[RMDB]
RNA sequence: GGGAACGACUCGAGUAGAGUCGAAAAGCAGUAUACUGCCACUUGUGUGAGAAUACUUUUAGUACAAGCGAGUACACGCAGUAUAGUGCCACUUGUGUGAGAAUACUUUUAGUACAAGCGAGUACACGAGAGCUCCCGUAUUCGUACGGGAGCUCUCAAAAGAAACAACAACAACAAC
Reactivity to 2A3 in 0.01 (KOAc 150mM, MgCl2 10mM, bicine 150mM(pH8.5), 24C), signal-to-noise 1, nucleotides 027 to 126: g020c000a000g000u010a000u000a000c000u000g000c010c000a000c000u010u000g000u000g000u080g130a270g230a120a000u010a020c000u000u120u120u300a030g000u000a020c010a060a030g000c000g000a000g000u000a030c030a010c130g100c010a000g000u000a000u060a060g220u000g000c000c000a010c000u030u060g000u030g000u000g010a020g020a160a030u200a300c000u090u080u160u250a050g000u000a000c050a100a000g030c010g020a030g000u000a000c060a130c050